[RMDB]
Structure probing data (2A3 and DMS) for a 207-nucleotide construct. The DMS profile rests on 3,721 reads. For 2A3, 7,508 sequencing reads were counted.
RNA sequence: GGGAACGACUCGAGUAGAGUCGAAAACGGCAAAAAAGCAAACUUGACCACCAAGGAUAAAAGAGAUCUUAUCCAAGGAUGCAAAAGAUAAUCUCACUUCUGACACCCACUGAUCUCGAACUUAAAGAAAACCGAGACUACUUCGGUAGUCUCGGAACGUAAAGUAUAUGUUCGCAUAUACUUUACGAAAAGAAACAACAACAACAAC
Reactivity to 2A3 in 0.01 (KOAc 150mM, MgCl2 10mM, bicine 150mM(pH8.5), 24C), signal-to-noise 7, nucleotides 027 to 156: c030g050g010c040a020a030a020a040a080a040g090c060a110a120a080c070u090u070g030a110c010c020a010c020c010a060a050g000g010a010u010a030a040a030a020g040a010g000a010u000c000u020u010a000u010c010c010a020a030g030g020a030u050g020c010a020a080a070a060g050a060u100a130a130u080c040u010c070a040c040u080u040c030u070g050a030c020a080c040c020c010a060c110u060g020a020u010c010u000c020g020a090a080c040u150u190a130a100a040g090a030a100a030a020c000c000g000a000g000a000c000u000a000c000u010u040c130g070g000u010a000g000u010c000u000c000g000g000a000a000
Reactivity to DMS in 0.01 (KOAc 150mM, MgCl2 10mM, bicine 150mM(pH8.5), 24C), signal-to-noise 2, nucleotides 027 to 156: c080g030g020c060a000a040a050a100a020a070g020c020a080a100a110c040u000u010g020a230c100c030a140c030c010a080a300g020g020a080u000a020a040a070a130g000a150g010a100u000c020u000u010a000u000c040c040a040a300g030g010a070u000g020c040a060a060a010a020g000a110u010a050a120u000c020u000c070a100c030u000u010c020u000g020a180c050a110c000c000c010a140c080u010g000a020u000c020u010c020g040a040a120c060u010u000a040a060a120g010a110a060a040a100c030c000g000a020g020a030c010u000a010c000u000u010c300g080g000u000a000g010u000c000u000c000g000g000a000a000